[RMDB]
RNA sequence: GGGAACGACUCGAGUAGAGUCGAAAAGGCGCGCGCCGCGACCUCCCACCGUCGGGGCGUCUGGCGGGUCGGAGGGCCAACGGGGCCGUGACCGGUAAAUGCGCUCCCUUGGCCGACCGCGGAUGGACAUAUUACCGAUGUUCGCAUCGGUAAUAUGAAAAGAAACAACAACAACAAC
Reactivity to 2A3 in 0.01 (KOAc 150mM, MgCl2 10mM, bicine 150mM(pH8.5), 24C), signal-to-noise 5, nucleotides 027 to 126: g050g000c040g000c000g000c020g030c070c010g070c000g040a080c000c020u010c020c010c010a030c020c030g050u040c020g000g030g030g210c060g110u060c040u040g110g130c030g010g000g030u070c030g030g060a100g030g040g000c000c000a020a010c050g020g000g000g010c030c020g020u020g050a110c050c020g010g010u100a090a100a040u130g020c080g010c030u050c010c000c000u010u020g010g000c020c030g040a060c000c030g020c030g050g010a090u100g050g000a030
Reactivity to DMS in 0.01 (KOAc 150mM, MgCl2 10mM, bicine 150mM(pH8.5), 24C), signal-to-noise 8, nucleotides 027 to 126: g010g010c040g020c040g020c090g020c030c010g010c030g010a120c100c030u000c010c010c030a170c080c070g020u010c020g010g000g010g020c110g010u000c020u000g010g010c020g010g000g010u000c110g010g010a080g020g010g010c010c010a040a050c260g010g010g000g010c020c020g020u000g000a110c080c060g010g000u010a040a100a040u000g010c100g010c010u000c010c010c040u000u000g000g000c010c040g000a060c060c010g020c050g000g010a100u010g010g010a300

Structure probing data (2A3 and DMS) for a 177-nucleotide construct. It was measured as part of the RMDB library OK2TRN.